[RMDB]
RNA sequence: GGGAACGACUCGAGUAGAGUCGAAAAGAUAUGGAGUCCAUGGAGCAAAGACUAUUCGGAAACGAACGAAUCUUUGAACUACUCCGUUGGACUCCUAAGUCAAAACUGACGUCUUCGGACGUCAGAACAUAUGGGUGAUGUUCGCAUCACCCAUAUGAAAAGAAACAACAACAACAAC
Reactivity to 2A3 in 0.01 (KOAc 150mM, MgCl2 10mM, bicine 150mM(pH8.5), 24C), signal-to-noise 4, nucleotides 027 to 126: g010a020u060a030u120g000g020a000g020u000c000c000a010u010g000g060a000g010c020a010a030a000g010a020c100u120a090u020u020c000g050g040a080a140a130c070g020a040a010c030g080a090a300u000c000u060u010u030g010a060a040c050u170a070c000u270c010c000g040u030u030g000g000a000c000u000c000c000u000a010a000g020u000c020a000a000a080a130c010u010g010a000c010g000u030c000u020u050c280g130g010a000c000g000u000c000a010g000a020a010
Reactivity to DMS in 0.01 (KOAc 150mM, MgCl2 10mM, bicine 150mM(pH8.5), 24C), signal-to-noise 6, nucleotides 027 to 126: g000a040u000a300u010g000g000a020g010u000c000c000a020u010g000g000a020g010c000a010a020a010g000a020c070u000a280u000u000c010g000g000a100a100a210c040g010a010a020c120g010a070a060u000c000u000u000u000g000a060a030c070u020a300c000u000c010c020g010u000u000g010g000a020c010u000c010c000u000a010a060g020u000c050a080a080a100a100c010u000g000a000c010g010u000c000u000u020c260g020g010a010c000g000u000c000a000g010a090a140
Chemical mapping of a 177-nucleotide RNA with 2A3 and DMS. The DMS profile rests on 7,364 reads. The RNA was probed in 150 mM KOAc, 10 mM MgCl2 and 150 mM bicine (pH 8.5) at 24 C. For 2A3 the reverse transcriptase was SuperScript II with manganese.